The record gives the reactivity of an RNA of 207 nucleotides to DMS and 2A3. In probing experiments dimethyl sulfate is read out at A N1 and C N3, which are open when not base-paired. Source: RMDB library OK3TST, as collected in RNAgym.
[RMDB]
RNA sequence: GGGAACGACUCGAGUAGAGUCGAAAAUGGAUGGCUACCUCUUGAAAGUGACCACCAAAGCAGGUGGGGCGUCUGUGGCCUCCCUCUUGCUCUAGCCUCCGCCUCACUUACCCGUUCAGCAGCACUGCUCGGUUAGAGCACUCAGGAGAUGUGGUUCAUUACUGGUCCUUUUCGAAGGACCAGUAAUAAAAGAAACAACAACAACAAC
Reactivity to DMS in 0.01 (KOAc 150mM, MgCl2 10mM, bicine 150mM(pH8.5), 24C), signal-to-noise 1, nucleotides 027 to 156: u000g020g000a040u010g000g020c080u000a050c020c010u010c030u040u010g000a100a130a070g000u000g010a030c030c010a040c020c020a080a100a130g000c070a060g000g040u000g030g000g040g000c040g000u020c110u000g000u000g050g020c030c000u000c010c020c010u000c060u000u010g000c020u010c010u000a100g010c060c020u000c040c020g000c030c020u000c010a040c040u000u000a060c060c040c020g040u000u010c070a120g000c080a090g000c070a280c040u000g000c010u000c020g000g040u000u000a110g010a040g000c000a050c120u000c050a080g000g020a090g000a080u000g020u020g000g010u010u000c070
Reactivity to 2A3 in 0.01 (KOAc 150mM, MgCl2 10mM, bicine 150mM(pH8.5), 24C), signal-to-noise 3, nucleotides 027 to 156: u050g040g070a040u090g040g000c030u060a020c010c010u070c030u090u130g170a180a110a070g040u080g050a140c000c020a020c000c020a150a050a040g070c090a020g030g000u040g010g000g000g000c020g040u090c160u230g070u090g040g020c010c000u040c020c000c000u050c030u020u120g000c010u020c040u100a000g000c000c000u030c010c010g010c000c020u020c010a020c010u040u100a050c000c010c020g070u070u060c030a040g010c000a010g010c030a060c170u030g000c010u020c010g000g070u050u080a020g000a000g040c000a020c010u050c020a040g030g060a060g020a030u130g000u040g000g000u080u080c030